[RMDB]
RNA sequence: GGGAACGACUCGAGUAGAGUCGAAAAAGCAGUCGAUUCGUCGACUGCUAAUGGGUCGGGACUACAUCACAGGUUGUUCGCUAGCCCUCUUUGGACCAGUAAAAAAGAGCUUAUUCGUAAGCUCUAAUGGUAAGUGGAGGUUCGCCUCCACUUACCAAAAAGAAACAACAACAACAAC
Reactivity to DMS in 0.01 (KOAc 150mM, MgCl2 10mM, bicine 150mM(pH8.5), 24C), signal-to-noise 1, nucleotides 027 to 126: a040g010c020a010g010u000c000g000a060u000u000c190g050u000c020g000a010c000u000g000c000u000a000a030u000g020g040g010u010c120g000g000g030a070c000u000a030c070a050u000c100a060c300a150g040g020u000u000g020u000u000c150g020c060u000a130g000c010c010c000u000c120u020u020u000g010g040a040c000c040a120g000u060a000a060a040a120a120a050g000a020g000c010u000u000a050u000u030c200g010u000a000a000g020c000u000c000u000a000a040